[RMDB]
RNA sequence: GGGAACGACUCGAGUAGAGUCGAAAAAUAUGCCCAGAAUCUGCUUAAGAAGUUGAUUGGCGGUGAUGUCACUCCAGUUGACCAAUACAUGUGUGGCGUUGAUGGAAAACCCAUUAGUGCCUACGCAAUACUAGUAGCUUCGGCUACUAGAAAAGAAACAACAACAACAAC
Reactivity to 2A3 in 0.01 (KOAc 150mM, MgCl2 10mM, bicine 150mM(pH8.5), 24C), signal-to-noise 9, nucleotides 027 to 129: a000u180a050u180g050c000c000c000a010g020a000a120u070c060u090g050c060u200u090a180a040g100a100a030g080u020u030g030a030u000u040g010g000c110g000g060u030g060a240u300g270u300c010a000c020u000c000c000a020g020u020u010g040a080c020c000a100a050u110a140c120a120u100g020u000g000u020g020g000c000g000u000u010g000a000u010g000g010a040a050a060a080c010c000c000a000u000u000a010g000u000g000c000c020u020a020c010g000c010a020a020u030a150
Reactivity to DMS in 0.01 (KOAc 150mM, MgCl2 10mM, bicine 150mM(pH8.5), 24C), signal-to-noise 8, nucleotides 027 to 129: a050u050a110u030g040c010c000c010a180g020a120a080u000c090u040g000c110u040u040a050a040g030a090a080g010u050u000g010a000u000u000g040g020c190g010g060u000g000a190u070g030u110c040a010c000u000c010c010a070g030u000u000g000a010c000c080a080a120u040a040c150a100u030g020u000g030u010g000g040c060g010u000u000g030a050u000g000g020a120a120a130a160c240c000c000a040u010u000a020g000u020g000c040c010u000a000c030g000c050a050a080u060a100

An RNA of 170 nucleotides, treated with 2A3 and DMS and read out base by base. The data come from the RNA Mapping Database (RMDB), library 15KLIB. Conditions: 150 mM KOAc, 10 mM MgCl2 and 150 mM bicine (pH 8.5), 24 C. Reactivities are rounded to 0.1 and cut off at 0 and 3.